[RMDB]
RNA sequence: GGGAACGACUCGAGUAGAGUCGAAAAUGGUGCUCUCACCUCACACGUGACACUUGGUCCUUUUUGCAUUAUGGUGGUGACCACUGAUGACCGUAUACCUGGCCGUGGAGUGACUGGCUGUACUGUCCGAUGUCUUACCCUUCGGGGUAAGACAUCGAAAAGAAACAACAACAACAAC
Reactivity to 2A3 in 0.01 (KOAc 150mM, MgCl2 10mM, bicine 150mM(pH8.5), 24C), signal-to-noise 2, nucleotides 027 to 126: u110g000g030u010g010c030u010c030u000c050a060c010c000u010c010a110c000a000c060g090u050g000a050c010a060c170u030u070g110g010u010c000c000u020u070u000u110u210g050c080a080u110u030a120u270g060g000u030g020g030u050g030a050c160c000a000c050u050g040a080u130g030a040c010c000g040u050a000u050a110c010c040u040g010g020c020c010g030u060g010g070a060g020u050g050a100c030u040g030g010c040u040g020u100a060c040u050g110u000c020
Reactivity to DMS in 0.01 (KOAc 150mM, MgCl2 10mM, bicine 150mM(pH8.5), 24C), signal-to-noise 3, nucleotides 027 to 126: u010g000g020u000g010c120u000c110u010c020a090c050c020u000c150a060c150a110c230g020u000g020a070c090a070c070u010u010g010g000u010c060c010u000u000u000u000u000g020c070a100u010u010a080u000g020g010u000g000g010u000g000a080c080c010a040c060u000g020a100u010g000a090c030c030g000u010a060u010a090c080c040u000g000g020c020c050g030u000g000g000a090g020u000g000a070c060u010g000g030c050u000g010u010a090c050u010g000u010c110
Structure probing data (2A3 and DMS) for a 177-nucleotide construct. The RNA was probed in 150 mM KOAc, 10 mM MgCl2 and 150 mM bicine (pH 8.5) at 24 C. Reactivities are given for positions 27 through 126.